[RMDB]
RNA sequence: GGGAACGACUCGAGUAGAGUCGAAAAGGCAGCAGCGACGGCGCAGCGUGGGACGGCCAGGCGCGACGGGAGGGAAGCAACCGGUUGCAGUCCGGCCUCCUGUACCUGGCUGGCCCGGGCUGGGGCUGAGAUAUCUUUGGUUCGCCAAAGAUAUCUCAAAAGAAACAACAACAACAAC
Reactivity to DMS in 0.01 (KOAc 150mM, MgCl2 10mM, bicine 150mM(pH8.5), 24C), signal-to-noise 2, nucleotides 027 to 126: g040g000c030a030g010c020a050g010c050g000a080c110g000g000c020g010c040a010g010c040g030u020g010g000g020a010c010g020g020c010c000a000g000g010c300g030c140g030a010c050g030g000g000a030g010g010g000a120a070g010c290a090a300c030c060g020g010u000u030g010c280a210g010u000c010c010g020g010c000c000u000c000c000u000g010u000a060c030c000u000g020g010c030u000g000g000c020c010c010g000g000g000c010u010g000g000g000g020c040u000
Reactivity to 2A3 in 0.01 (KOAc 150mM, MgCl2 10mM, bicine 150mM(pH8.5), 24C), signal-to-noise 1, nucleotides 027 to 126: g040g030c030a010g000c020a010g000c010g070a020c030g080g000c070g000c020a000g000c210g300u060g000g000g010a020c010g010g000c000c010a010g020g000c060g050c140g170a000c010g000g000g000a010g000g010g040a140a030g090c060a070a110c020c010g000g050u070u300g130c110a040g060u060c000c000g050g000c000c000u010c000c000u000g000u000a010c000c020u000g000g000c020u000g010g000c000c010c020g000g060g000c010u010g020g010g060g000c040u050